Structure probing data (2A3 and DMS) for a 207-nucleotide construct. The RNA was probed in 150 mM KOAc, 10 mM MgCl2 and 150 mM bicine (pH 8.5) at 24 C. 2A3 is a SHAPE reagent: it acylates the 2'-hydroxyl of flexible nucleotides of all four kinds. Source: RMDB library RNAMAK, as collected in RNAgym. 2A3 adducts were read by reverse transcription with SuperScript II with manganese. DMS adducts were read by reverse transcription with MarathonRT.
RNA sequence: GGGAACGACUCGAGUAGAGUCGAAAAGGAACAAUUCGUUGUUCCAUAAGGACCUUUGUGAGCUUCCUAUGGGAGUCGAAUGGGUCCCAUUGGGACCCAUACGACGAAGAACAUAGCUGAAGCUCACUCUGGUAGUAGCUCUAUCUUCGGAUAGAAAUAGGAAUGUGUAAUUCGUUACACAUUCCUAAAAAGAAACAACAACAACAAC
Reactivity to 2A3 in 0.01 (KOAc 150mM, MgCl2 10mM, bicine 150mM(pH8.5), 24C), signal-to-noise 4, nucleotides 027 to 156: g000g000a000a000c000a010a040u150u140c190g060u100u030g000u010u040c010c000a010u160a040a050g110g030a020c000c000u000u000u000g000u000g000a000g000c000u000u000c000c000u000a000u000g010g010g010a040g030u010c000g000a040a000u010g010g000g000u020c060c000c010a230u260u300g020g000g010a010c000c000c000a000u010a020c000g000a000c020g000a020a050g010a020a010c000a010u020a000g080c220u100g020a000a010g000c000u000c000a000c000u000c010u000g020g000u000a020g100u050a030g030c050u010c000u050a010u000c010u040u050c300g100g000a010u000a010g030a060a120a080
Reactivity to DMS in 0.01 (KOAc 150mM, MgCl2 10mM, bicine 150mM(pH8.5), 24C), signal-to-noise 2, nucleotides 027 to 156: g000g010a040a020c030a050a080u020u000c120g030u010u000g000u000u010c000c000a090u010a050a100g030g000a070c000c000u000u000u020g000u000g010a020g010c000u000u010c000c000u000a010u000g000g000g010a230g010u000c000g020a080a030u000g020g040g060u000c000c010c010a090u010u000g110g090g000a040c000c010c000a000u000a010c000g030a040c020g020a060a200g000a150a190c010a030u000a000g020c130u000g000a030a030g010c010u010c010a000c000u000c010u010g020g010u010a080g010u000a100g000c090u010c010u000a020u000c010u010u010c300g050g010a050u000a010g010a020a120a260